[RMDB]
RNA sequence: GGGAACGACUCGAGUAGAGUCGAAAAUGCUUGCAGUCCCAGCUUCCGGAAUGAGAGGGAGAGCGCAGCAUCUGGCUCCACACGAUCAUCCAGUACAUUUCACCACAUUGUCUGCAGCUCACCUCGCGAAACGAACUUAGUUCGCUAAGUUCGUUUCAAAAGAAACAACAACAACAAC
Reactivity to DMS in 0.01 (KOAc 150mM, MgCl2 10mM, bicine 150mM(pH8.5), 24C), signal-to-noise 4, nucleotides 027 to 126: u000g000c050u010u000g010c030a060g010u000c010c020c010a150g000c060u010u000c050c070g010g000a140a080u010g010a140g010a090g000g010g000a120g010a020g020c030g010c030a020g020c060a060u000c100u000g010g000c050u000c020c040a050c090a080c080g010a090u000c070a070u010c040c030a070g020u000a050c110a130u000u000u010c050a120c050c040a070c150a070u000u000g000u000c010u000g000c020a090g020c000u000c020a110c040c010u020c020g010c170
Reactivity to 2A3 in 0.01 (KOAc 150mM, MgCl2 10mM, bicine 150mM(pH8.5), 24C), signal-to-noise 5, nucleotides 027 to 126: u080g020c030u020u080g020c010a010g050u040c000c000c010a000g000c000u080u020c070c040g090g130a160a150u170g020a100g010a020g150g050g010a300g000a000g060c010g000c010a000g000c000a030u030c040u020g030g000c020u020c040c000a050c020a020c070g050a100u060c010a030u030c030c010a010g030u050a060c020a100u070u100u110c110a090c070c010a060c040a100u050u050g070u060c010u020g000c020a070g000c010u000c020a030c000c010u020c000g000c020